RNA sequence: GGGAACGACUCGAGUAGAGUCGAAAACAAACAAGCAUCACAUAUAGAUGUAGCAACAAGUUUGUCAAUAGCAGCUAUUCAUCUAUAUGUCAACAACAACUAUUGACAAACCAGACGAUGCGAACAAGGGAAAUAGAUAGUUCGCUAUCUAUUUCCCAAAAGAAACAACAACAACAAC
Reactivity to 2A3 in 0.01 (KOAc 150mM, MgCl2 10mM, bicine 150mM(pH8.5), 24C), signal-to-noise 9, nucleotides 027 to 126: c050a020a090a010c030a090a030g020c010a020u030c030a010c040a050u140a000u060a080g070a040u050g040u120a030g060c020a000a120c020a110a090g030u040u050u030g050u060c020a010a020u030a060g080c110a020g030c060u110a100u170u200c040a040u010c050u070a080u060a020u160g060u050c030a050a090c010a020a020c010a020a030c030u040a040u040u030g010a010c010a020a040a020c030c000a010g040a060c090g030a030u030g040c020g050a030a030c080a110a110
Reactivity to DMS in 0.01 (KOAc 150mM, MgCl2 10mM, bicine 150mM(pH8.5), 24C), signal-to-noise 5, nucleotides 027 to 126: c090a090a130a130c200a090a110g010c040a010u020c030a150c090a040u000a070u020a020g000a030u000g010u030a070g000c060a070a100c150a100a150g000u010u000u000g000u000c020a010a000u000a000g000c110a100g000c070u010a030u040u020c080a010u000c150u000a050u030a030u010g000u000c100a060a090c100a070a090c170a080a150c030u000a030u000u000g000a000c020a040a030a060c030c060a090g020a090c200g000a020u000g010c000g020a050a090c240a040a100